The record gives the reactivity of an RNA of 177 nucleotides to 2A3 and DMS. The reactions ran in a buffer of 150 mM KOAc, 10 mM MgCl2 and 150 mM bicine (pH 8.5), at 24 C. The data come from the RNA Mapping Database (RMDB), library TTRDEL. The DMS profile rests on 5,055 reads. For 2A3, 9,086 sequencing reads were counted.
[RMDB]
RNA sequence: GGGAACGACUCGAGUAGAGUCGAAAAGAUAUGGAUCGGUGGGAGCUCGUCUUCGGAAACGAAGACAGAGCAUCGAUCACCAUCCUAAGUCAAAAGUCAAACACGCGCUUCGGCGCGUGUUUGACAAGAUUAACAAUGUGUUCGCACAUUGUUAAUCAAAAGAAACAACAACAACAAC
Reactivity to 2A3 in 0.01 (KOAc 150mM, MgCl2 10mM, bicine 150mM(pH8.5), 24C), signal-to-noise 2, nucleotides 027 to 126: g010a010u030a020u070g000g010a020u020c180g020g000u010g000g030g020a030g000c000u000c000g000u000c000u000u000c010g010g000a050a030a020c010g000a000a000g000a010c040a030g000a000g000c020a030u300c000g010a020u010c000a000c000c000a010u010c000c010u010a040a000g020u010c010a010a000a110a120g000u000c000a000a010a000c000a010c020g000c020g020c040u090u230c300g110g000c000g050c010g000u000g000u000u010u000g000a000c000a010a000
Reactivity to DMS in 0.01 (KOAc 150mM, MgCl2 10mM, bicine 150mM(pH8.5), 24C), signal-to-noise 3, nucleotides 027 to 126: g000a030u000a130u010g000g000a000u000c210g020g010u000g000g000g010a020g020c000u000c010g000u000c000u000u000c000g010g010a040a030a080c000g000a010a010g000a020c000a020g020a010g020c010a130u010c170g000a100u010c020a000c010c000a070u000c000c000u000a030a100g010u000c020a080a090a110a120g020u000c000a000a010a020c010a010c000g000c000g010c010u000u010c260g010g010c000g030c000g020u000g000u010u000u010g000a000c010a030a040